This 207-nucleotide RNA was probed chemically with 2A3 and DMS. The data come from the RNA Mapping Database (RMDB), library OK3TST. The reactions ran in a buffer of 150 mM KOAc, 10 mM MgCl2 and 150 mM bicine (pH 8.5), at 24 C. The DMS profile rests on 3,763 reads. Values cover nucleotides 27 to 156. 2A3 adducts were read by reverse transcription with SuperScript II with manganese.
[RMDB]
RNA sequence: GGGAACGACUCGAGUAGAGUCGAAAAGGUGAAAAGCAUUGAAUAUUAGCAGAUCAUCACAGUCAGGAAGUAGGCUCAUAGGUGUGUCCUUAGGAGAAGAUGGUUUUACGUCAAUGAAUCAAAUUGAAAUAGUCUGGUUCUUCGUAUUGGUGCUGCAAGUACCUGUGGAUUUCGAUCCACAGGUACUAAAAGAAACAACAACAACAAC
Reactivity to 2A3 in 0.01 (KOAc 150mM, MgCl2 10mM, bicine 150mM(pH8.5), 24C), signal-to-noise 3, nucleotides 027 to 156: g050g000u040g030a050a040a000a000g010c030a020u100u200g060a100a030u120a080u270u120a040g010c040a020g050a110u020c020a020u040c030a030c040a090g070u090c030a010g030g110a080a040g030u080a030g010g000c010u010c070a080u120a090g000g050u040g020u020g030u060c000c010u050u090a050g010g050a040g030a040a020g020a050u050g030g050u010u020u030u120a020c050g010u030c040a040a050u060g060a040a070u050c030a050a080a050u040u040g050a050a040a100u080a030g020u020c060u020g010g000u000u020c000u000u010c030g010u020a040u080u100g020g010u030g010c020u010g020c000a020
Reactivity to DMS in 0.01 (KOAc 150mM, MgCl2 10mM, bicine 150mM(pH8.5), 24C), signal-to-noise 2, nucleotides 027 to 156: g020g030u000g010a040a030a140a180g010c030a120u000u000g050a090a110u020a140u010u020a100g040c020a110g020a210u010c060a080u000c060a100c070a090g010u010c050a140g000g010a060a060g010u000a090g010g020c010u000c060a090u000a100g050g050u000g000u000g010u010c000c000u010u010a120g000g020a160g030a060a100g000a110u000g010g060u000u000u000u000a050c050g040u010c040a030a070u000g030a060a060u000c050a010a030a090u010u000g000a130a100a100u000a070g030u000c030u000g030g010u000u000c010u010u000c100g000u000a130u000u000g000g030u000g030c020u000g000c010a070